[RMDB]
This 177-nucleotide RNA was probed chemically with DMS. The reactions ran in a buffer of 150 mM KOAc, 10 mM MgCl2 and 150 mM bicine (pH 8.5), at 24 C. Source: RMDB library TTRINS, as collected in RNAgym. DMS adducts were read by reverse transcription with MarathonRT.
RNA sequence: GGGAACGACUCGAGUAGAGUCGAAAAGAUAUGGACUCGAUCCACCGUGGCGAAGAACCUAAGCUUAUUUGCUCGGAAACGAGCAAAUAAGCUUAGGGGAGCCAAGGUGGAGUCGAGUCCUAAGUCAUCAUAAGCUUUACUUCGGUAAAGCUUAUGAAAAAGAAACAACAACAACAAC
Reactivity to DMS in 0.01 (KOAc 150mM, MgCl2 10mM, bicine 150mM(pH8.5), 24C), signal-to-noise 3, nucleotides 027 to 126: g020a070u010a300u000g010g010a010c000u010c000g020a140u000c010c000a020c020c010g000u000g000g000c000g000a090a190g010a140a260c010c000u000a000a020g010c000u000u000a010u000u000u000g020c000u000c000g020g000a110a110a220c010g000a010g050c000a000a000a000u000a000a000g010c000u000u000a000g000g000g010g010a040g010c000c000a040a020g000g040u000g000g020a010g000u010c000g010a020g020u000c000c000u000a010a070g000u000c050a210